About this RNA
This 177-nucleotide RNA was probed chemically with 2A3 and DMS. 2A3 adducts were read by reverse transcription with SuperScript II with manganese. Values cover nucleotides 27 to 126. It was measured as part of the RMDB library OK2TRN. The reactions ran in a buffer of 150 mM KOAc, 10 mM MgCl2 and 150 mM bicine (pH 8.5), at 24 C. 2A3 is a SHAPE reagent: it acylates the 2'-hydroxyl of flexible nucleotides of all four kinds. Values are in units of 0.01, from 0 to 300, in steps of 10. The DMS profile rests on 46,224 reads. For DMS the reverse transcriptase was MarathonRT.

[RMDB]
RNA sequence: GGGAACGACUCGAGUAGAGUCGAAAACUGAAAAGGAGAUCAUCAUCAUGUGCAGCACGAACGAACGGAUCUCGGACUUUAUGCAGCUAAGUAAUCGCUUGAACGUUGCAAUGUCCCGUGCGAAGCACGGUCAUACCUCGUUCGCGAGGUAUGACCGAAAAGAAACAACAACAACAAC
Reactivity to 2A3 in 0.01 (KOAc 150mM, MgCl2 10mM, bicine 150mM(pH8.5), 24C), signal-to-noise 9, nucleotides 027 to 126: c030u040g030a030a040a040a060g080g000a020g000a000u010c010a020u010c010a030u030c030a060u190g020u030g040c100a040g000c000a020c020g040a170a020c040g030a080a020c060g120g010a020u000c010u000c000g000g000a010c020u100u110u060a110u150g010c010a010g010c010u020a050a010g020u060a230a250u170c120g020c080u020u050g070a100a020c090g010u010u010g000c000a020a040u050g000u010c000c000c010g000u010g000c010g050a110a010g020c030a010
Reactivity to DMS in 0.01 (KOAc 150mM, MgCl2 10mM, bicine 150mM(pH8.5), 24C), signal-to-noise 9, nucleotides 027 to 126: c030u000g000a060a060a110a100g010g010a030g000a020u000c010a120u010c120a110u010c140a070u010g020u000g020c070a220g000c020a020c020g010a100a110c170g010a080a090c160g010g000a020u000c010u000c010g010g000a040c020u000u000u010a110u020g010c010a020g010c010u000a030a050g010u000a100a100u010c220g000c040u000u010g010a070a100c200g000u000u000g000c010a030a070u000g000u000c010c010c010g020u000g010c010g010a110a160g010c080a080